[RMDB]
RNA sequence: GGGAACGACUCGAGUAGAGUCGAAAACCCUGUCUCCUCGGUUCUUCUUCGAUCCGGACCGGCUCAUCUCGGCAAGGGGCGGCAGUCCUCAGUACUCUUACUCUUUCCUAUAAAGAGGAGACUGCUGGGAGUACUAUAACUUCGGUUAUAGUACUCCAAAAGAAACAACAACAACAAC
Reactivity to 2A3 in 0.01 (KOAc 150mM, MgCl2 10mM, bicine 150mM(pH8.5), 24C), signal-to-noise 2, nucleotides 027 to 126: c010c000c010u000g000u000c020u010c010c030u030c040g080g020u040u040c020u100u030c020u060u090c070g040a040u030c030c030g040g000a040c010c010g030g000c000u030c020a120u030c040u040c050g030g020c030a030a050g040g010g020g010c000g020g000c010a000g030u010c010c010u030c010a020g030u040a050c010u020c020u070u060a280c000u030c000u050u160u030c030c040u110a090u190a260a050a020g000a000g000g010a000g000a000c020u010g010c020u030g060
Reactivity to DMS in 0.01 (KOAc 150mM, MgCl2 10mM, bicine 150mM(pH8.5), 24C), signal-to-noise 1, nucleotides 027 to 126: c050c060c000u020g000u000c050u000c020c000u000c080g000g010u000u010c010u000u000c090u000u000c100g010a040u000c080c070g020g000a130c070c030g000g000c030u010c030a090u010c080u000c060g030g010c100a100a090g000g000g010g000c070g010g010c090a030g010u000c000c040u000c040a020g010u000a030c160u000c000u000u010a130c040u000c010u010u010u000c170c080u000a140u010a020a070a050g000a030g000g000a020g030a030c050u000g000c040u000g000
An RNA of 177 nucleotides, treated with 2A3 and DMS and read out base by base. The DMS profile rests on 1,174 reads. The RNA was probed in 150 mM KOAc, 10 mM MgCl2 and 150 mM bicine (pH 8.5) at 24 C. It was measured as part of the RMDB library 15KREP. High DMS reactivity at an A or C suggests that its Watson-Crick edge is free.